This 177-nucleotide RNA was probed chemically with DMS. The RNA was probed in 150 mM KOAc, 10 mM MgCl2 and 150 mM bicine (pH 8.5) at 24 C. For DMS the reverse transcriptase was MarathonRT.
RNA sequence: GGGAACGACUCGAGUAGAGUCGAAAAGAUAUGGAUGCUACUAGUUCCAUGCAAGAGCGAUAAGCGUGCAUCGGAAACGAUGCAACGCUUUUGACGCUCAACCAUGGAACUAGUAGCAUCCUAAGUCGAAACUGUCAGUGUUCGCACUGACAGUUUCAAAAGAAACAACAACAACAAC
Reactivity to DMS in 0.01 (KOAc 150mM, MgCl2 10mM, bicine 150mM(pH8.5), 24C), signal-to-noise 1, nucleotides 027 to 126: g050a190u000a240u000g070g010a040u000g020c000u010a020c000u000a010g000u000u000c000c000a000u000g030c020a030a300g000a030g000c000g000a230u000a070a000g020c030g010u000g010c000a000u000c000g000g000a220a070a270c000g030a000u010g000c000a100a040c000g000c000u000u000u000u050g060a150c150g060c000u000c000a000a300c300c000a000u000g000g000a000a010c000u020a000g000u000a000g000c000a000u000c010c000u000a000a060g010u040c080